[RMDB]
RNA sequence: GGGAACGACUCGAGUAGAGUCGAAAAAUCGAUUAUAAUCGGCGCAUGCCGUAAUAUAUCGGCGCGCCGGCAUCGAUAUAUGCGCGCGCGCGCCGAUCGCGUACGUAAUUAGCCGAUGCCGCGAUCGUAGAACCAUAUUCUUCGGAAUAUGGUUCUAAAAAGAAACAACAACAACAAC
Reactivity to DMS in 0.01 (KOAc 150mM, MgCl2 10mM, bicine 150mM(pH8.5), 24C), signal-to-noise 5, nucleotides 027 to 126: a070u000c010g010a030u000u010a080u010a160a070u000c010g010g020c000g010c200a050u000g000c120c010g000u000a030a060u000a080u010a040u000c010g010g010c000g020c010g030c040c030g000g000c020a000u000c150g010a170u020a080u010a040u010g000c010g010c040g030c170g010c010g010c020g000c000c010g000a000u000c050g020c210g010u000a020c030g020u010a070a050u000u010a200g000c030c010g010a030u000g010c130c120g010c090g000a020u000c050g020
Reactivity to 2A3 in 0.01 (KOAc 150mM, MgCl2 10mM, bicine 150mM(pH8.5), 24C), signal-to-noise 2, nucleotides 027 to 126: a000u060c000g000a010u030u080a070u080a260a040u020c000g000g000c010g010c060a010u050g020c040c000g000u010a030a020u060a010u020a010u020c000g000g020c000g000c000g000c020c000g000g030c010a010u010c070g150a020u020a010u050a010u190g030c290g000c010g000c040g000c010g000c000g010c190c000g000a000u000c000g010c060g020u000a030c000g000u030a060a120u050u100a050g010c000c000g000a020u030g050c000c040g110c060g010a010u040c020g040